[RMDB]
RNA sequence: GGGAACGACUCGAGUAGAGUCGAAAAGUAGUGACCGUCUUCGUGAAUAGGAUACGGUAAUCCUGCGAAAUUGCGAACUGACUGGCAUGGGAGGUGCUUAUGCUUGAACGCUUGAACCAUGUGGCGACACUGCUACUAAUUUCGAUUAGUAGCAGUGAAAAGAAACAACAACAACAAC
Reactivity to DMS in 0.01 (KOAc 150mM, MgCl2 10mM, bicine 150mM(pH8.5), 24C), signal-to-noise 9, nucleotides 027 to 126: g020u000a070g020u000g010a080c040c020g010u000c050u000u000c020g010u000g010a130a130u010a120g000g000a020u000a040c080g010g010u010a090a080u000c050c000u000g010c080g010a060a090a090u010u000g010c030g000a060a070c090u010g010a090c070u010g010g010c040a040u000g010g010g010a090g000g010u000g000c050u000u000a050u000g010c080u000u000g010a060a090c100g000c020u000u000g010a080a130c050c030a060u000g010u000g010g010c070g010a240
Reactivity to 2A3 in 0.01 (KOAc 150mM, MgCl2 10mM, bicine 150mM(pH8.5), 24C), signal-to-noise 9, nucleotides 027 to 126: g060u070a010g030u010g120a040c010c010g010u030c030u020u010c020g080u050g170a160a070u120a270g020g020a020u020a050c040g020g010u020a030a060u040c000c010u020g000c030g040a040a080a100u120u120g020c030g010a040a020c040u050g090a030c020u040g050g000c020a030u030g020g020g030a100g020g030u040g000c020u110u070a060u150g060c040u070u100g050a060a020c030g010c030u030u070g030a030a020c010c000a030u070g030u060g080g010c010g020a010